Notes:
Structure probing data (DMS and 2A3) for a 207-nucleotide construct. The reactions ran in a buffer of 150 mM KOAc, 10 mM MgCl2 and 150 mM bicine (pH 8.5), at 24 C. For DMS, 2,099 sequencing reads were counted. For 2A3 the reverse transcriptase was SuperScript II with manganese. Values cover nucleotides 27 to 156.

RNA sequence: GGGAACGACUCGAGUAGAGUCGAAAACGUGGAUAACGAACUAUGCUGUUCGCUCCCAUGCGCACGAAAGCAUUAUAAUCCAUUAGACGCAAAGCCGGACCAACUCGUCGUACACGACCCGCAGUAUGACUAUCGUCGGCCCGUUGGCGUUGACGAGACAACGACAGAGUUUCGACUCUGUCGUUGUAAAAGAAACAACAACAACAAC
Reactivity to DMS in 0.01 (KOAc 150mM, MgCl2 10mM, bicine 150mM(pH8.5), 24C), signal-to-noise 1, nucleotides 027 to 156: c040g080u010g040g010a100u000a050a080c010g020a070a030c030u010a090u000g050c080u000g000u010u000c020g000c020u000c030c010c020a120u000g020c030g050c090a240c140g050a140a050a170g030c030a080u000u000a090u000a030a060u010c040c030a140u010u000a090g010a120c030g040c050a040a110a150g030c060c030g010g020a080c000c000a040a050c010u000c260g030u000c000g020u020a060c040a080c050g010a110c050c030c010g010c050a200g040u000a110u020g030a040c010u000a160u010c020g050u000c050g000g030c020c020c020g000u010u000g000g000c000g040u000u000g010a080c020g000a230g010
Reactivity to 2A3 in 0.01 (KOAc 150mM, MgCl2 10mM, bicine 150mM(pH8.5), 24C), signal-to-noise 2, nucleotides 027 to 156: c070g020u060g000g010a070u030a210a060c060g020a050a000c100u040a060u180g010c070u070g090u070u030c020g000c000u100c040c030c000a070u130g000c030g000c000a000c070g100a150a080a080g000c020a010u070u050a070u190a120a060u070c010c000a000u020u120a040g090a040c020g000c070a130a160a020g090c080c040g070g010a080c030c010a030a090c070u010c160g000u000c000g000u030a000c010a000c110g150a170c020c020c030g010c050a020g010u040a040u120g030a000c040u050a060u180c030g010u010c000g020g000c000c000c010g070u070u080g020g000c030g030u020u010g000a030c060g000a000g000